Source: RMDB library OK2TRN, as collected in RNAgym. Structure probing data (DMS and 2A3) for a 177-nucleotide construct. For DMS, 1,213 sequencing reads were counted. The 2A3 profile rests on 1,497 reads. The RNA was probed in 150 mM KOAc, 10 mM MgCl2 and 150 mM bicine (pH 8.5) at 24 C. For DMS the reverse transcriptase was MarathonRT.
RNA sequence: GGGAACGACUCGAGUAGAGUCGAAAAUCAACGACCACGAGCGGGUGCCCAAGGUAUUCGCCGAACUCAGCGAUGAGAUUGGCGGCAUUGACCGUGUGAUCGUCAACGCCGGAAUCGGCAAGGGUGCGGACACUUACUACUUCGGUAGUAAGUGUCCAAAAGAAACAACAACAACAAC
Reactivity to DMS in 0.01 (KOAc 150mM, MgCl2 10mM, bicine 150mM(pH8.5), 24C), signal-to-noise 2, nucleotides 027 to 126: u000c110a130a070c020g000a020c020c000a260c030g010a070g010c040g060g000g000u000g010c030c010c100a190a110g000g020u020a110u000u020c050g000c000c010g020a030a050c070u000c030a140g010c130g000a080u000g020a080g040a090u000u000g010g010c020g010g020c100a060u030u000g030a070c000c030g000u000g010u000g000a040u010c020g020u000c040a050a090c050g030c020c010g000g020a060a070u000c010g000g010c000a110a060g000g010g010u010g000c100
Reactivity to 2A3 in 0.01 (KOAc 150mM, MgCl2 10mM, bicine 150mM(pH8.5), 24C), signal-to-noise 1, nucleotides 027 to 126: u080c010a000a070c020g000a000c000c010a000c010g030a050g040c070g030g030g090u120g000c050c010c010a000a050g170g000u100a170u070u210c090g000c000c010g060a040a040c000u030c030a000g000c020g010a030u000g000a000g000a030u000u020g050g020c000g020g000c020a080u080u150g150a220c000c010g000u220g070u080g090a080u050c030g160u060c090a060a030c030g000c020c040g060g030a120a080u090c000g040g040c010a040a080g050g000g000u030g040c060